Conditions: 150 mM KOAc, 10 mM MgCl2 and 150 mM bicine (pH 8.5), 24 C. Chemical mapping of a 177-nucleotide RNA with 2A3 and DMS. In probing experiments dimethyl sulfate is read out at A N1 and C N3, which are open when not base-paired. Reactivities are given for positions 27 through 126. For 2A3 the reverse transcriptase was SuperScript II with manganese. DMS adducts were read by reverse transcription with MarathonRT. For DMS, 9,072 sequencing reads were counted.
RNA sequence: GGGAACGACUCGAGUAGAGUCGAAAAGGCAGGGGUGCUCUUUGAUGUGGGGGUGCUGCUGACUGCGGGGGCAAUGAACAUCACAAUGCUUUUGUGUGGGAGGGUGCUACUAGGCAUCGCAGUUGCCCUUCCUUUUGGAUUUCGAUCCAAAAGGAAGAAAAGAAACAACAACAACAAC
Reactivity to 2A3 in 0.01 (KOAc 150mM, MgCl2 10mM, bicine 150mM(pH8.5), 24C), signal-to-noise 2, nucleotides 027 to 126: g030g010c040a000g030g030g000g020u060g000c010u000c030u110u090u230g210a160u160g030u190g020g000g030g000g020u010g020c030u060g040c000u030g040a090c060u070g030c050g040g020g000g000g000c010a000a060u100g030a050a030c010a030u090c010a010c000a040a060u130g110c050u130u140u080u050g060u010g000u040g000g030g010a110g010g000g040u030g020c000u030a170c030u030a060g030g030c000a020u030c020g010c020a040g020u050u050g000c000c000
Reactivity to DMS in 0.01 (KOAc 150mM, MgCl2 10mM, bicine 150mM(pH8.5), 24C), signal-to-noise 5, nucleotides 027 to 126: g010g010c030a050g010g010g010g020u000g000c030u000c020u000u010u000g010a100u010g020u010g010g000g010g010g020u000g000c030u000g000c040u010g000a050c060u000g010c080g010g000g000g020g020c050a040a040u000g000a100a120c080a070u010c040a020c070a040a040u010g010c200u010u000u000u000g020u010g010u000g010g010g000a140g010g000g010u000g000c020u010a080c190u010a090g000g000c020a020u000c030g010c060a130g000u000u010g010c020c020